Record summary
An RNA of 177 nucleotides, treated with DMS and 2A3 and read out base by base. The data come from the RNA Mapping Database (RMDB), library OK2TRN. For DMS the reverse transcriptase was MarathonRT. For 2A3, 598 sequencing reads were counted.
[RMDB]
RNA sequence: GGGAACGACUCGAGUAGAGUCGAAAAUAACUAUUUAGCAAAAUUAACGGCGUUAGUGAAUGGAUGUGAUUUCUUUCCUGGACUCUAUGGGGCAUCUAUAACACCCACCAACUUAAACAAAAUACAACCAUUUAAGACCUUUCGAGGUCUUAAAUGGAAAAGAAACAACAACAACAAC
Reactivity to DMS in 0.01 (KOAc 150mM, MgCl2 10mM, bicine 150mM(pH8.5), 24C), signal-to-noise 1, nucleotides 027 to 126: u010a150a130c150u000a010u000u000u000a110g010c070a070a090a100a170u050u000a090a250c070g000g000c010g000u000u010a020g050u000g000a040a020u020g000g000a010u010g000u000g040a060u000u000u000c110u010u010u010c020c020u000g000g010a050c040u000c100u010a120u010g010g010g010g010c010a010u000c020u010a020u000a030a070c150a130c010c060c000a070c120c020a070a090c180u010u000a010a060a100c090a050a120a070a100u000a070c300a130a280
Reactivity to 2A3 in 0.01 (KOAc 150mM, MgCl2 10mM, bicine 150mM(pH8.5), 24C), signal-to-noise 1, nucleotides 027 to 126: u080a000a000c030u090a130u160u080u160a060g000c010a000a060a150a300u110u050a120a060c030g020g030c030g100u030u130a060g010u100g040a030a120u100g000g060a040u010g030u060g190a170u020u060u020c040u040u050u000c020c040u000g130g020a040c000u000c010u120a070u040g000g000g060g020c000a000u080c030u060a070u090a130a020c030a030c050c000c000a010c000c000a040a120c030u180u160a030a130a040c090a080a140a020a020u180a070c060a070a000